[RMDB]
RNA sequence: GGGAACGACUCGAGUAGAGUCGAAAAGAUAUGGACAUACGCGAGCGAUAAGCCACACUCGGAAACGAGUGAAUGGCUUUUGACGCUCGAUGUAUGUCCUAAGUCAAAACCAAGCUUCGGCUUGGAAGAUCCGUACUGUGUUCGCACAGUACGGAUCAAAAGAAACAACAACAACAAC
Reactivity to DMS in 0.01 (KOAc 150mM, MgCl2 10mM, bicine 150mM(pH8.5), 24C), signal-to-noise 2, nucleotides 027 to 126: g010a020u000a300u000g000g010a030c030a000u000a000c000g050c000g000a050g030c010g020a190u000a050a030g000c010c010a100c030a030c000u010c010g000g000a080a110a220c000g020a000g000u000g020a040a130u000g040g030c000u000u000u000u000g000a270c100g000c000u000c000g030a030u020g000u000a030u000g010u020c000c000u000a000a060g000u000c010a100a100a120a300c000c000a010a010g020c010u000u020c190g030g020c010u000u000g000g000a080a130
Reactivity to 2A3 in 0.01 (KOAc 150mM, MgCl2 10mM, bicine 150mM(pH8.5), 24C), signal-to-noise 1, nucleotides 027 to 126: g000a020u040a050u180g000g000a010c000a000u000a000c010g000c000g020a000g030c060g130a080u020a230a010g020c010c000a030c000a000c020u020c020g030g060a060a080a040c000g000a010g010u000g010a000a110u020g010g000c020u000u000u010u020g100a030c060g010c000u030c020g000a010u030g000u000a010u000g000u020c000c000u000a010a000g010u010c000a000a020a110a190c000c010a000a010g000c000u040u250c300g190g000c000u010u030g020g020a020a010

The record gives the reactivity of an RNA of 177 nucleotides to DMS and 2A3. Source: RMDB library TTRDES, as collected in RNAgym. The reactions ran in a buffer of 150 mM KOAc, 10 mM MgCl2 and 150 mM bicine (pH 8.5), at 24 C. As a SHAPE reagent, 2A3 marks flexible, mostly unpaired nucleotides at the ribose 2'-OH.